[RMDB]
Structure probing data (DMS and 2A3) for a 177-nucleotide construct. The reactions ran in a buffer of 150 mM KOAc, 10 mM MgCl2 and 150 mM bicine (pH 8.5), at 24 C.

RNA sequence: GGGAACGACUCGAGUAGAGUCGAAAAGGAUGCAACGUAGUCAUAUGUGUCAUUGCUCGCUCUUGAAUGACACAUGACUAGUCGUGGUUUGAGACAAGAGCGAGCUCGAGUUACGACAUCUGUAUCGCUACUACUUACUAUUCGUAGUGAGUAGUAGAAAAGAAACAACAACAACAAC
Reactivity to DMS in 0.01 (KOAc 150mM, MgCl2 10mM, bicine 150mM(pH8.5), 24C), signal-to-noise 9, nucleotides 027 to 126: g000g000a030u000g000c020a060a070c180g010u000a020g010u000c000a100u010a090u010g020u010g010u010c080a100u010u000g010c010u000c010g010c010u000c010u000u000g010a090a060u010g000a030c020a050c000a010u000g000a020c070u010a110g020u000c010g040u000g000g000u000u000u000g000a190g000a120c040a030a030g000a020g010c010g000a020g010c000u000c070g000a060g010u000u000a030c030g000a100c030a050u000c060u000g010u000a080u000c090g000
Reactivity to 2A3 in 0.01 (KOAc 150mM, MgCl2 10mM, bicine 150mM(pH8.5), 24C), signal-to-noise 9, nucleotides 027 to 126: g030g000a010u020g010c010a030a030c050g040u030a040g010u020c010a020u070a040u190g110u020g030u020c030a080u010u130g010c000u000c010g010c010u020c000u020u060g070a060a020u060g010a010c030a000c000a100u010g000a000c010u030a030g050u010c000g000u010g010g030u010u020u070g060a020g000a000c020a030a010g010a000g030c010g010a000g000c000u000c010g030a030g010u030u020a020c030g050a050c040a030u010c030u030g030u020a040u030c020g000